[RMDB]
RNA sequence: GGGAACGACUCGAGUAGAGUCGAAAAGGCCUGGGCCCCAUCGACAUCGGUGAUGGUCAUGUGGGAAACAUCAAACACACCGGCUGCUGUGCGCACCUGAUUGUGCUCUUCCAAUUGGGAGCCGUAACCUCAUAGUAGAGUUCGCUCUACUAUGAGGAAAAGAAACAACAACAACAAC
Reactivity to DMS in 0.01 (KOAc 150mM, MgCl2 10mM, bicine 150mM(pH8.5), 24C), signal-to-noise 7, nucleotides 027 to 126: g010g020c020c020u000g010g000g000c030c010c030c020a070u010c080g020a080c130a090u000c020g020g020u010g010a080u000g000g000u000c090a060u000g010u000g010g000g000a120a100a070c090a040u010c110a100a090a100c100a050c060a070c060c020g000g020c080u000g000c040u000g020u000g020c090g000c060a140c030c040u000g000a050u000u000g020u000g000c080u000c050u010u010c040c030a080a100u000u000g000g000g000a070g030c050c040g010u010a070a160
Reactivity to 2A3 in 0.01 (KOAc 150mM, MgCl2 10mM, bicine 150mM(pH8.5), 24C), signal-to-noise 7, nucleotides 027 to 126: g080g040c010c010u020g030g030g040c020c000c010c000a030u040c050g080a090c010a090u120c070g090g030u090g030a240u090g020g050u070c030a040u080g040u110g020g080g000a070a150a030c040a060u120c080a090a210a020c040a000c010a020c050c000g030g010c050u050g020c020u080g030u060g050c040g000c040a060c020c020u060g040a140u060u080g040u080g030c020u040c010u160u040c030c020a060a150u110u110g030g000g000a020g010c010c010g020u040a050a090